[RMDB]
An RNA of 207 nucleotides, treated with DMS and 2A3 and read out base by base. Source: RMDB library OK3TST, as collected in RNAgym. DMS (dimethyl sulfate) methylates the pairing face of unpaired adenines and cytosines. The reactions ran in a buffer of 150 mM KOAc, 10 mM MgCl2 and 150 mM bicine (pH 8.5), at 24 C.
RNA sequence: GGGAACGACUCGAGUAGAGUCGAAAAGAAGCACGGCUUGUGUGUGAUCCUUUUGGAUUGCACUGUAUAUCCUACGCUGUGCGAACGUAGGUCCAUUGUGGCGAGAGCCACUUACAGUACAGCUUAUUAUGACGCAUCGCUGUACGAACGAUGCCGAAAAUUUAGGCUGGUUCGCCAGCCUAAAUUUAAAAGAAACAACAACAACAAC
Reactivity to DMS in 0.01 (KOAc 150mM, MgCl2 10mM, bicine 150mM(pH8.5), 24C), signal-to-noise 2, nucleotides 027 to 156: g000a110a140g000c010a100c000g030g000c060u000u000g050u020g040u000g030u010g000a040u000c010c010u000u000u000u000g090g020a100u000u020g050c000a020c000u010g000u000a060u000a100u030c040c010u000a080c100g040c000u000g040u010g050c040g050a110a030c030g020u000a040g040g020u000c110c060a160u010u010g010u000g000g040c010g020a300g020a300g040c000c000a010c010u000u000a020c050a120g030u000a050c000a050g020c040u000u000a070u010u000a100u000g010a220c200g000c030a050u000c030g030c000u000g030u000a140c130g030a070a070c030g000a060u000g010c000c000g020a100
Reactivity to 2A3 in 0.01 (KOAc 150mM, MgCl2 10mM, bicine 150mM(pH8.5), 24C), signal-to-noise 2, nucleotides 027 to 156: g030a080a000g000c050a000c060g010g020c000u120u130g090u020g000u010g000u000g150a000u000c000c000u110u260u130u300g000g010a000u000u030g010c000a000c000u000g100u030a140u020a040u150c030c030u020a010c040g010c020u060g010u050g030c000g010a060a000c000g000u040a020g000g040u000c070c000a060u050u100g000u000g000g020c010g060a100g000a030g010c000c000a000c030u010u060a060c030a000g010u000a000c010a010g040c020u150u080a060u190u060a120u300g190a080c090g010c100a060u020c010g000c010u010g000u040a010c000g000a050a000c040g040a030u160g010c000c020g030a050